[RMDB]
RNA sequence: GGGAACGACUCGAGUAGAGUCGAAAAGGAUCUAUGUUACUGGCACAUUGGGUGACAGUGCUGCGGGUCUGGCUAUUUUGCAAAAUGAGCUGCGGGUAGAUAACGAAACCGAUCGAGCGGCAUUAAACUAAUUACCCGCAUUCGUGCGGGUAAUUAGAAAAGAAACAACAACAACAAC
Reactivity to DMS in 0.01 (KOAc 150mM, MgCl2 10mM, bicine 150mM(pH8.5), 24C), signal-to-noise 2, nucleotides 027 to 126: g000g000a030u000c040u000a090u010g020u000u000a040c010u000g000g000c010a020c010a300u010u020g020g040g030u000g010a030c030a020g020u000g010c030u010g020c140g010g010g000u000c020u010g000g030c040u010a090u010u010u010u020g030c030a090a070a080a100u000g000a120g020c070u000g060c040g000g000g000u000a030g020a080u010a070a070c110g010a070a110a090c050c020g000a120u000c120g000a070g050c030g000g010c050a070u000u000a060a120a150
Reactivity to 2A3 in 0.01 (KOAc 150mM, MgCl2 10mM, bicine 150mM(pH8.5), 24C), signal-to-noise 2, nucleotides 027 to 126: g000g010a010u050c000u030a140u100g040u060u180a010c000u000g030g000c030a010c070a130u220u300g300g160g000u010g060a020c000a020g000u000g010c010u040g000c120g020g050g000u020c030u030g020g010c020u100a140u190u110u210u200g060c090a090a130a000a080u080g030a050g030c020u060g000c050g050g010g020u060a100g070a180u150a100a020c090g030a110a000a000c050c020g010a040u150c080g030a030g040c020g000g020c000a020u120u150a060a090a040